Overview
Structure probing data (DMS and 2A3) for a 207-nucleotide construct. For DMS the reverse transcriptase was MarathonRT. The data come from the RNA Mapping Database (RMDB), library OK3TST. The DMS profile rests on 2,749 reads.
RNA sequence: GGGAACGACUCGAGUAGAGUCGAAAAGAUGUAUUCACUGCACUGAUUGGGGAGAUUGCAAGUCCCAAUUAUCCCAAACCAUAUCCAGAGAACUCAAGGUGUGAAUACCAGAUCCGGUUGGAGAAAGGGUUCCAAGUGGUGGUGACCUUGCGGAGAAAGGAUAAAAUGGAUUCGUCCAUUUUAUCCUAAAAGAAACAACAACAACAAC
Reactivity to DMS in 0.01 (KOAc 150mM, MgCl2 10mM, bicine 150mM(pH8.5), 24C), signal-to-noise 1, nucleotides 027 to 156: g010a080u000g000u000a030u000u000c000a070c100u000g000c030a070c100u010g000a040u030u000g010g000g050g030a140g000a070u020u000g010c160a100a160g010u010c040c030c030a020a030u000u000a120u000c000c020c010a060a060a110c080c010a070u000a110u000c060c050a160g000a150g010a070a090c060u000c030a080a130g000g020u000g000u000g000a090a020u000a040c020c060a170g000a150u000c010c000g010g030u000u000g040g000a100g000a050a050a140g010g010g040u000u000c010c040a090a170g000u040g000g000u000g020g000u000g000a020c040c040u000u000g030c100g030g020a120g000a050a200
Reactivity to 2A3 in 0.01 (KOAc 150mM, MgCl2 10mM, bicine 150mM(pH8.5), 24C), signal-to-noise 3, nucleotides 027 to 156: g020a080u050g000u030a030u040u090c040a000c020u060g010c030a000c040u050g020a010u020u020g020g030g090g000a050g110a150u190u260g090c130a100a030g090u070c000c000c000a000a000u040u020a070u070c000c000c010a040a040a030c060c010a050u070a040u180c020c030a020g050a000g030a220a060c030u040c080a050a080g000g000u030g040u010g030a020a020u070a120c030c020a030g020a120u030c050c010g100g040u040u050g080g000a030g050a040a070a050g030g030g030u050u010c020c030a060a020g070u020g080g030u040g010g000u020g030a000c000c000u020u060g020c030g040g000a030g060a160a160